[RMDB]
RNA sequence: GGGAACGACUCGAGUAGAGUCGAAAAUACGAUAGCAAUUAAUAAACCAUGCAGGUAGUCCAAAUAAGGACUUCAUCUUUACCUGGAAAUCUGAUUUAAAAAAGGCCGCUUAAUAAUAAGCGGCCUGUGUUCUAAUCUAUUUCGAUAGAUUAGAACAAAAAGAAACAACAACAACAAC
Reactivity to 2A3 in 0.01 (KOAc 150mM, MgCl2 10mM, bicine 150mM(pH8.5), 24C), signal-to-noise 3, nucleotides 027 to 126: u120a020c090g060a040u130a030g010c030a020a050u130u150a080a120u240a150a080a050c030c010a010u120g020c010a040g020g000u050a010g020u040c010c010a070a060a150u180a130a200g010g000a000c000u040u060c060a080u000c040u070u200u010a030c010c020u000g000g130a030a080a060u180c070u050g200a260u080u170u180a030a120a080a070a010a000g000g010c000c000g000c060u120u050a080a090u150a260a030u100a070a050g000c030g000g020c000c000u000g000
Reactivity to DMS in 0.01 (KOAc 150mM, MgCl2 10mM, bicine 150mM(pH8.5), 24C), signal-to-noise 2, nucleotides 027 to 126: u010a080c090g050a100u030a050g000c050a090a070u040u000a120a070u000a070a110a130c090c090a080u010g020c070a010g000g000u000a030g000u020c000c000a010a070a170u060a200a050g010g010a060c030u030u020c100a040u030c060u000u000u010a010c060c010u000g000g010a070a070a070u010c070u010g010a050u010u010u000a000a160a100a180a060a030g000g000c000c000g020c010u020u000a080a090u030a090a180u060a040a000g000c000g000g010c000c000u000g000
Structure probing data (2A3 and DMS) for a 177-nucleotide construct. Conditions: 150 mM KOAc, 10 mM MgCl2 and 150 mM bicine (pH 8.5), 24 C. The DMS profile rests on 1,855 reads. 2A3 adducts were read by reverse transcription with SuperScript II with manganese.